An RNA of 177 nucleotides, treated with 2A3 and DMS and read out base by base. 2A3 adducts were read by reverse transcription with SuperScript II with manganese. Values cover nucleotides 27 to 126.
RNA sequence: GGGAACGACUCGAGUAGAGUCGAAAAGGCCGCGCGGGUGUUGUCGCCUGCGAAGGCGGUACCACCGACCAGACUCAGGGACAACAGGAGUAUCGAGGAAUACUUCAUAGAGAGUUUCUCUCUGUGGGAGUCGUCUUGUAUUCGUACAAGACGACUCAAAAGAAACAACAACAACAAC
Reactivity to 2A3 in 0.01 (KOAc 150mM, MgCl2 10mM, bicine 150mM(pH8.5), 24C), signal-to-noise 3, nucleotides 027 to 126: g050g000c000c000g010c010g000c010g040g020g050u030g040u060u080g030u080c070g060c070c000u010g000c040g030a010a000g000g010c040g010g020u070a160c010c020a030c010c010g040a100c010c020a010g020a030c000u000c040a010g000g000g060a040c010a040a010c010a050g000g030a020g020u030a020u030c060g030a110g030g050a110a010u030a090c020u020u070c020a030u080a020g050a000g010a010g040u010u110u040c030u000c010u000c000u010g030u080g020g030
Reactivity to DMS in 0.01 (KOAc 150mM, MgCl2 10mM, bicine 150mM(pH8.5), 24C), signal-to-noise 1, nucleotides 027 to 126: g040g030c010c000g030c030g000c060g000g080g000u010g000u030u000g000u000c020g030c000c000u030g000c220g050a080a080g020g000c010g000g000u000a000c130c140a150c040c000g000a120c030c060a060g020a220c030u010c030a030g000g000g000a100c060a110a030c040a060g020g000a020g000u000a010u010c010g000a100g000g000a050a040u040a070c020u000u030c020a030u030a010g000a010g000a000g010u020u020u040c010u000c000u000c010u030g000u000g020g030